An RNA of 177 nucleotides, treated with 2A3 and DMS and read out base by base. For 2A3 the reverse transcriptase was SuperScript II with manganese. The RNA was probed in 150 mM KOAc, 10 mM MgCl2 and 150 mM bicine (pH 8.5) at 24 C. In probing experiments dimethyl sulfate is read out at A N1 and C N3, which are open when not base-paired. For DMS, 2,441 sequencing reads were counted. High 2A3 reactivity points to a flexible backbone, as in loops and unpaired stretches.
[RMDB]
RNA sequence: GGGAACGACUCGAGUAGAGUCGAAAAUAGUAGAUAGGGGUGGAAGAUGACAGCUUUCCCGCAGGCCACCCUGUUAAGUGGUUUACCACGAUUAAUGUCAUCAAAAUAAAAUGGGACCCAAAACAAAGAUCCACUAUGUAUUCGUACAUAGUGGAUCAAAAGAAACAACAACAACAAC
Reactivity to 2A3 in 0.01 (KOAc 150mM, MgCl2 10mM, bicine 150mM(pH8.5), 24C), signal-to-noise 1, nucleotides 027 to 126: u080a000g150u010a030g030a240u120a050g020g000g000g020u010g000g000a000a140g030a030u010g000a000c000a000g000c020u030u080u010c000c000c000g030c030a000g050g070c000c010a000c000c000c000u000g000u000u040a060a020g000u030g050g080u020u100u180a080c000c000a010c040g000a000u000u140a090a040u010g000u000c000a000u010c000a060a040a020a020u150a000a070a020a080u070g060g000g010a010c000c040c000a030a040a050a030c060a050a200a020
Reactivity to DMS in 0.01 (KOAc 150mM, MgCl2 10mM, bicine 150mM(pH8.5), 24C), signal-to-noise 3, nucleotides 027 to 126: u000a100g010u010a090g000a130u010a110g010g000g020g020u000g010g000a190a130g020a030u000g010a010c000a080g000c080u000u010u000c010c000c000g000c170a090g020g000c010c010a010c010c030c000u000g000u010u010a070a150g030u000g010g020u010u000u010a110c000c000a000c010g000a100u000u000a060a080u000g020u000c010a020u000c000a100a080a080a090u030a030a020a090a080u010g000g000g000a110c020c030c040a080a070a060a070c150a120a070a210